This 177-nucleotide RNA was probed chemically with 2A3 and DMS. High 2A3 reactivity points to a flexible backbone, as in loops and unpaired stretches. Source: RMDB libraries RFM100 and RFMREP, as collected in RNAgym. The RNA was probed in 150 mM KOAc, 10 mM MgCl2 and 150 mM bicine (pH 8.5) at 24 C.

RNA sequence: GGGAACGACUCGAGUAGAGUCGAAAAAAAACAUUUUUUUCUUCCUGUGUAAUUUUGUCUUGAAAAUCAAGGCCACUUUUUUGUUUUCUCCAUCCAAAGACCUCCAGAAACUUUCCUCCCCACCUCUAGAUACAUUAAGAUUCGUCUUAAUGUAUCUAAAAGAAACAACAACAACAAC
Reactivity to 2A3 in 0.01 (KOAc 150mM, MgCl2 10mM, bicine 150mM(pH8.5), 24C), signal-to-noise 8, nucleotides 027 to 126: a000a000a000a000c180a130u210u080u030u010u010u030u030c030u030u030c010c010u030g010u010g050u160a100a170u050u130u120u060g010u000c000u010u040g050a180a150a110a140u140c010a010a010g010g010c020c020a020c030u080u080u040u020u050u110g070u050u050u040u040c010u020c010c000a080u010c000c010a050a040a080g040a120c010c000u010c010c010a010g050a040a070a040c040u030u050u020c000c010u020c010c000c000c000a030c010c010u010c010u010
Reactivity to DMS in 0.01 (KOAc 150mM, MgCl2 10mM, bicine 150mM(pH8.5), 24C), signal-to-noise 2, nucleotides 027 to 126: a020a000a060a110c080a010u000u000u010u000u010u000u030c050u000u000c010c000u000g010u010g040u010a090a060u000u020u010u010g010u010c020u000u000g000a090a110a060a100u010c020a020a020g010g020c010c060a030c050u000u000u000u020u010u010g010u000u000u010u000c020u000c020c010a040u000c020c010a040a070a120g010a110c070c010u000c020c000a090g000a070a050a070c020u010u020u020c050c010u000c020c000c000c030a090c060c050u000c080u000